[RMDB]
The data come from the RNA Mapping Database (RMDB), library TTRDEL.
This 177-nucleotide RNA was probed chemically with DMS and 2A3.
For DMS the reverse transcriptase was MarathonRT.
For 2A3, 2,554 sequencing reads were counted.
Conditions: 150 mM KOAc, 10 mM MgCl2 and 150 mM bicine (pH 8.5), 24 C.

RNA sequence: GGGAACGACUCGAGUAGAGUCGAAAAGAUAUGGAAGGGAGGGAGAAGUGUAGCUAUUCGGAAACGAAUAGCUUCGACGAUCUCCUUCCUAAGUCGAAGGACGGUAAGUAUUCGUACUUACCGUCAACCAUCUUGUGCGUUUCGACGCACAAGAUGGAAAAGAAACAACAACAACAAC
Reactivity to DMS in 0.01 (KOAc 150mM, MgCl2 10mM, bicine 150mM(pH8.5), 24C), signal-to-noise 2, nucleotides 027 to 126: g010a060u000a070u010g000g010a070a110g000g050g030a000g020g000g020a060g020a110a220g010u040g010u000a010g000c000u000a000u000u000c010g000g000a070a060a070c000g010a000a010u010a000g000c010u000u010c000g040a050c030g000a300u000c000u000c000c010u020u010c000c000u000a010a000g020u000c060g020a170a100g000g010a010c000g000g020u000a000a010g020u000a020u000u010c220g000u000a020c000u000u000a000c000c000g000u000c000a010a080
Reactivity to 2A3 in 0.01 (KOAc 150mM, MgCl2 10mM, bicine 150mM(pH8.5), 24C), signal-to-noise 2, nucleotides 027 to 126: g010a010u110a040u150g010g060a060a060g170g120g050a030g000g110g000a070g020a250a120g070u100g000u200a010g020c000u010a000u010u000c020g000g010a000a070a010c000g010a000a010u000a000g000c030u030u040c040g180a090c000g010a040u020c000u020c020c020u000u000c000c000u010a000a000g010u020c000g050a080a020g260g020a000c000g000g000u000a000a000g010u040a050u140u300c300g130u080a030c000u000u000a010c000c010g020u010c000a000a000